[RMDB]
RNA sequence: GGGAACGACUCGAGUAGAGUCGAAAAGUGGUUCCGCACUCCGAGACUUCUACGAUGACACGCUGCGUCGCCGCUUCGACAAGGAAGUGUACGCAGAGCGUGACCGCCGUUGGAACGGUAAGGAAGGCCAGCCCAUCGACCGCGAGGUUGGUGCGGCGGUCCACAUUUCAUUCGUGAAAUGUGGACCAAAAGAAACAACAACAACAAC
Reactivity to DMS in 0.01 (KOAc 150mM, MgCl2 10mM, bicine 150mM(pH8.5), 24C), signal-to-noise 2, nucleotides 027 to 156: g020u000g020g030u000u010c020c030g000c100a000c050u000c080c000g030a150g000a180c070u000u010c020u020a060c010g030a030u000g020a060c040a040c000g000c040u000g050c020g000u000c050g000c130c040g020c000u000u000c030g040a230c300a140a170g000g000a020a030g030u000g020u000a030c040g030c000a020g010a020g000c000g050u010g000a020c000c010g000c000c300g000u010u010g050g020a120a210c000g000g030u000a080a130g010g040a120a050g020g000c010c030a110g020c030c000c000a040u000c030g020a020c000c000g020c280g010a230g010g000u000u010g020g020u000g000c060g000g000c020
Reactivity to 2A3 in 0.01 (KOAc 150mM, MgCl2 10mM, bicine 150mM(pH8.5), 24C), signal-to-noise 3, nucleotides 027 to 156: g080u050g010g060u120u120c010c010g080c040a030c040u030c020c010g070a060g060a110c010u050u000c010u080a000c020g040a050u070g010a000c000a000c010g020c000u020g010c000g030u040c050g080c110c020g040c030u000u010c010g240a270c130a170a000g230g000a010a010g010u020g010u080a000c010g040c000a010g030a040g140c010g000u000g050a080c030c030g020c020c030g010u020u100g050g010a080a100c030g010g020u020a010a060g010g010a030a090g050g010c050c040a020g000c020c010c000a010u020c010g030a050c000c000g010c030g020a090g010g030u020u000g010g000u040g000c140g010g000c020
An RNA of 207 nucleotides, treated with DMS and 2A3 and read out base by base. The reactions ran in a buffer of 150 mM KOAc, 10 mM MgCl2 and 150 mM bicine (pH 8.5), at 24 C. It was measured as part of the RMDB library OK3TST. For 2A3 the reverse transcriptase was SuperScript II with manganese.